[RMDB]
Structure probing data (DMS) for a 177-nucleotide construct. It was measured as part of the RMDB library RFMREP. DMS adducts were read by reverse transcription with MarathonRT. Values cover nucleotides 27 to 126.
RNA sequence: GGGAACGACUCGAGUAGAGUCGAAAAGCCCCCCUGUAAAGCGGUUCGCUAUGCCGGGGCCACUGUGAACCCUGCCGCCUGCCGGAACACUCUUCGCUCCGGACCAGCUCAGCCUCUGAUAAGCUGGGAUAGACUUACUCUUCGGAGUAAGUCUAUCAAAAGAAACAACAACAACAAC
Reactivity to DMS in 0.01 (KOAc 150mM, MgCl2 10mM, bicine 150mM(pH8.5), 24C), signal-to-noise 1, nucleotides 027 to 126: g000c010c000c000c010c050c010u000g010u000a060a080a110g010c090g000g000u000u010c080g010c050u000a080u000g000c070c010g000g000g000g000c050c070a050c050u000g010u000g000a050a150c020c000c040u000g000c000c090g030c040c050u000g070c040c060g000g010a040a100c040a080c070u000c070u000u000c150g010c020u000c000c020g000g010a160c030c040a070g010c030u000c080a070g000c050c030u000c080u000g000a130u010a080a070g000c010u000g000g000